Conditions: 150 mM KOAc, 10 mM MgCl2 and 150 mM bicine (pH 8.5), 24 C. The record gives the reactivity of an RNA of 177 nucleotides to DMS and 2A3. Values cover nucleotides 27 to 126. The DMS profile rests on 785 reads. It was measured as part of the RMDB library M2PK50. For DMS the reverse transcriptase was MarathonRT.
RNA sequence: GGGAACGACUCGAGUAGAGUCGAAAAACCUGAUGAUUCGUCAUCAGGUCACAUGCCGCCCGAACGGCUUCCUGACCGGGCGGAUACACUUUAAAUGGAGCACUGCUGCAUCAUUCGUGAUGCAGAACACGUAGUGGGCUUUCGAGCCCACUACGUGAAAAGAAACAACAACAACAAC
Reactivity to DMS in 0.01 (KOAc 150mM, MgCl2 10mM, bicine 150mM(pH8.5), 24C), signal-to-noise 1, nucleotides 027 to 126: a030c000c000u000g000a000u000g000a010u000u000c210g000u000c030a000u000c000a010g040g010u000c070a040c200a030u000g030c020c000g030c010c010c020g000a050a250c060g000g030c050u020u010c000c010u020g000a180c130c000g000g000g000c010g000g020a000u000a030c200a040c210u000u000u030a040a100a030u030g000g000a030g030c000a140c280u000g010c000u000g020c000a000u000c000a010u010u030c170g000u000g000a010u000g020c000a010g010a090a110
Reactivity to 2A3 in 0.01 (KOAc 150mM, MgCl2 10mM, bicine 150mM(pH8.5), 24C), signal-to-noise 2, nucleotides 027 to 126: a000c010c000u010g000a000u010g000a020u030u090c180g020u000c090a000u000c000a020g000g000u000c000a060c000a070u120g000c010c010g000c050c000c000g000a040a000c090g020g000c000u190u120c000c030u020g020a010c020c000g000g000g010c000g000g020a010u110a010c130a030c010u190u290u300a100a190a180u170g020g000a010g010c030a020c100u140g040c000u000g000c000a000u000c000a020u050u100c150g060u020g000a010u000g010c010a000g010a010a000